Source: RMDB library TTRDES, as collected in RNAgym. Structure probing data (2A3 and DMS) for a 177-nucleotide construct. The DMS profile rests on 1,146 reads. Conditions: 150 mM KOAc, 10 mM MgCl2 and 150 mM bicine (pH 8.5), 24 C. Values cover nucleotides 27 to 126.

RNA sequence: GGGAACGACUCGAGUAGAGUCGAAAAAAAAGAUAUGGACGUUGACAUGGCUGUUUGGGACGUUGAAAUAGUCUCGGAAACGAGACUAUGGAGUCCUGAUAGCCAACAGCAACGUCCUAAGUCAAAAGCAAUACCUUUUGUUCGCAAAAGGUAUUGCAAAAGAAACAACAACAACAAC
Reactivity to 2A3 in 0.01 (KOAc 150mM, MgCl2 10mM, bicine 150mM(pH8.5), 24C), signal-to-noise 1, nucleotides 027 to 126: a000a040a020a000g070a050u080a060u240g000g010a000c020g010u000u020g080a180c060a160u100g060g000c000u030g100u240u110u300g040g000g000a020c030g220u300u040g000a010a020a010u020a000g010u000c000u000c010g000g000a090a090a070c040g010a000g020a000c000u000a000u000g020g000a020g000u000c000c000u000g020a000u000a000g030c030c000a000a000c000a000g000c010a000a010c020g000u000c000c000u000a010a030g030u030c020a000a060a110a000
Reactivity to DMS in 0.01 (KOAc 150mM, MgCl2 10mM, bicine 150mM(pH8.5), 24C), signal-to-noise 1, nucleotides 027 to 126: a060a040a080a050g010a010u000a300u000g010g010a000c000g010u000u010g000a070c080a220u000g010g010c010u000g030u000u000u010g060g000g030a010c020g000u000u020g010a160a090a000u010a000g000u010c010u000c000g000g040a080a050a110c010g000a020g010a020c000u000a000u000g000g000a050g000u000c000c030u000g020a000u000a030g010c030c000a000a040c300a210g000c010a010a010c030g000u000c000c000u000a000a070g030u000c050a080a070a120a030